[RMDB]
Conditions: 150 mM KOAc, 10 mM MgCl2 and 150 mM bicine (pH 8.5), 24 C.
This 177-nucleotide RNA was probed chemically with 2A3 and DMS.
For 2A3 the reverse transcriptase was SuperScript II with manganese.
The 2A3 profile rests on 4,084 reads.
RNA sequence: GGGAACGACUCGAGUAGAGUCGAAAACGGAUACGCUUCGGCGUAUCCGAAAUAAAGCCGGAAUAAAGCGCGCGCAAAAACCGGCAAUAAAGCCCGCGCAAAAAACGCGUCACUUCGGUGACGCGAACAAUGCAUCAUUGUUCGCAAUGAUGCAUUGAAAAGAAACAACAACAACAAC
Reactivity to 2A3 in 0.01 (KOAc 150mM, MgCl2 10mM, bicine 150mM(pH8.5), 24C), signal-to-noise 2, nucleotides 027 to 126: c000g010g000a000u010a000c000g010c010u030u090c230g100g000c000g000u000a010u000c000c000g010a000a000a000u060a020a060a010g000c010c000g000g100a070a120u150a120a210a050g050c070g020c020g010c000g030c140a020a050a060a040a100c010c000g000g000c070a010a050u070a050a010a010g010c030c040c000g020c010g060c010a080a070a040a060a050a030c000g000c000g000u010c000a000c020u030u070c230g080g000u000g000a000c000g000c000g000a010a000
Reactivity to DMS in 0.01 (KOAc 150mM, MgCl2 10mM, bicine 150mM(pH8.5), 24C), signal-to-noise 2, nucleotides 027 to 126: c000g000g010a000u000a000c000g020c010u010u010c180g000g010c000g010u000a000u000c000c000g000a010a050a050u000a080a110a180g000c000c000g000g000a170a090u000a080a170a140g000c020g030c130g020c160g000c070a030a100a070a150a050c020c010g000g030c010a050a050u000a090a100a150g000c010c010c000g040c110g000c080a010a030a060a040a030a070c040g000c000g000u000c000a010c000u000u000c160g030g010u000g000a000c000g020c000g000a020a040